[RMDB]
RNA sequence: GGGAACGACUCGAGUAGAGUCGAAAAACACCAAAACUGAAAACGGAAGGCAAUCCUUCCACGACGAUACUUACUUUCCUUUGAUCGUCGUUACUACUGGCAUAGCCACAAAGGAGAACAAACAUUAGCGCGGACACUGACUUCGGUCAGUGUCCAAGAUGAGGAUAGAGUUCGCUCUAUCCUCAUCAAAAGAAACAACAACAACAAC
Reactivity to 2A3 in 0.01 (KOAc 150mM, MgCl2 10mM, bicine 150mM(pH8.5), 24C), signal-to-noise 9, nucleotides 027 to 156: a000c100a090c030c060a080a080a050a080c170u230g080a110a070a030a050c070g000g010a010a000g030g000c130a060a210u280c000c000u010u010c000c000a010c000g000a000c000g000a000u080a170c020u070u040a030c020u070u140u060c010c010u050u020u020g020a000u010c000g000u000c000g000u040u050a030c020u030a030c030u010g030g000c070a290u120a130g030c000c010a040c050a020a050a010g030g010a030g030a060a030c050a090a100a030c050a140u130u210a060g110c070g010c090g120g000a000c000a000c000u010g010a000c000u040u060c160g030g000u000c000a000g000u000g000u000c000c000a000a000
Reactivity to DMS in 0.01 (KOAc 150mM, MgCl2 10mM, bicine 150mM(pH8.5), 24C), signal-to-noise 2, nucleotides 027 to 156: a050c050a190c060c040a030a070a110a300c100u020g010a070a040a060a090c060g000g010a030a020g080g010c090a120a130u000c000c000u000u000c000c000a080c000g000a030c020g010a040u000a090c040u000u000a000c110u010u000u060c020c030u010u000u000g030a060u010c030g000u000c020g030u000u000a030c050u000a180c090u000g000g000c070a140u000a080g050c030c000a120c120a040a050a060g030g020a040g000a060a130c090a080a150a070c080a110u020u000a140g020c090g030c140g040g010a020c000a000c000u000g020a030c000u000u010c300g070g020u050c000a010g000u000g010u000c010c000a000a090
An RNA of 207 nucleotides, treated with 2A3 and DMS and read out base by base. The RNA was probed in 150 mM KOAc, 10 mM MgCl2 and 150 mM bicine (pH 8.5) at 24 C. Reactivities are given for positions 27 through 156. DMS adducts were read by reverse transcription with MarathonRT. For DMS, 3,375 sequencing reads were counted.